Record summary: Conditions: 150 mM KOAc, 10 mM MgCl2 and 150 mM bicine (pH 8.5), 24 C. This 177-nucleotide RNA was probed chemically with DMS and 2A3. For DMS, 8,259 sequencing reads were counted.
RNA sequence: GGGAACGACUCGAGUAGAGUCGAAAAACAGAGCGAAGGGGGGACGGAGAAGGCUAUGUUGGCCGGGCGACGGUUGUCCCGGUUUAAGCGAGUAGGCUGGUUUUCCAGGCAAAUCCGGAAAAAGAAAUAUUAUAGCGAUAUUCGUAUCGCUAUAAUAAAAAGAAACAACAACAACAAC
Reactivity to DMS in 0.01 (KOAc 150mM, MgCl2 10mM, bicine 150mM(pH8.5), 24C), signal-to-noise 6, nucleotides 027 to 126: a100c060a080g000a060g020c040g010a080a070g000g010g010g010g000g000a070c090g010g010a050g010a100a080g010g000c040u010a040u010g010u000u000g010g010c010c010g000g000g020c300g010a070c170g010g000u010u010g000u010c010c000c010g000g000u000u000u000a030a070g010c040g000a070g020u010a080g010g010c020u000g010g000u000u000u010u000c010c010a110g000g000c060a050a080a110u010c010c020g000g010a040a040a050a070a090g000a070a070a110
Reactivity to 2A3 in 0.01 (KOAc 150mM, MgCl2 10mM, bicine 150mM(pH8.5), 24C), signal-to-noise 1, nucleotides 027 to 126: a000c000a020g050a050g000c030g040a050a040g010g010g030g000g000g000a000c010g000g010a030g040a050a020g050g000c040u030a030u180g080u070u070g060g000c000c030g030g000g000c040g040a180c130g100g080u130u110g030u150c000c000c000g000g000u060u080u030a020a010g010c000g010a030g040u050a020g110g040c020u010g020g000u000u020u150u020c020c000a000g020g000c010a050a070a080u010c050c020g050g030a060a060a000a000a000g040a010a090a030

For 2A3, 2,017 sequencing reads were counted. Source: RMDB library M2PK90, as collected in RNAgym. In probing experiments dimethyl sulfate is read out at A N1 and C N3, which are open when not base-paired. Reactivities are rounded to 0.1 and cut off at 0 and 3.